[RMDB]
RNA sequence: GGGAACGACUCGAGUAGAGUCGAAAAUGGUAGGCAUCUGUAACCCCAGCUAUUCGGGAGGCUGAGGUAGGAGAAUCACUUGAACCCGGGAGGCAGAGGUUGCAGUGAGCCAAGAUGGUGCCACUGCACUCCAGCCUGGACAACAAAGAGCAAAACAAGCUGAGUAUAUGUUCGCAUAUACUCAGCUAAAAGAAACAACAACAACAAC
Reactivity to DMS in 0.01 (KOAc 150mM, MgCl2 10mM, bicine 150mM(pH8.5), 24C), signal-to-noise 2, nucleotides 027 to 156: u010g030g040u000a080g030g030c040a060u000c030u010g000u010a080a070c020c010c000c010a070g000c010u010a080u020u000c060g000g000g010a100g030g020c020u000g020a040g000g010u000a080g020g010a070g010a090a040u000c020a040c030u000u000g000a050a110c010c000c000g000g000g010a050g020g010c030a100g000a080g010g010u010u010g010c000a030g020u010g020a300g000c000c010a070a140g040a110u010g030g000u010g000c050c030a020c010u000g010c010a060c030u010c010c020a070g010c010c010u000g030g010a100c040a060a070c030a060a080a080g020a100g020c020a050a060a050a080c060a120
Reactivity to 2A3 in 0.01 (KOAc 150mM, MgCl2 10mM, bicine 150mM(pH8.5), 24C), signal-to-noise 4, nucleotides 027 to 156: u100g020g020u040a050g030g030c050a050u010c060u020g060u110a060a060c020c000c000c000a000g000c010u080a090u140u170c060g050g010g000a040g020g000c030u020g010a020g030g000u030a030g010g060a040g030a050a070u090c020a010c060u030u060g040a050a050c020c000c000g020g020g030a000g020g000c060a030g010a030g070g040u170u090g000c010a000g000u020g010a030g000c000c010a030a030g140a130u220g050g050u160g030c030c010a000c000u000g000c000a000c010u000c000c010a010g000c010c000u010g010g040a020c020a100a010c020a020a150a020g080a030g040c040a020a180a030a070c050a130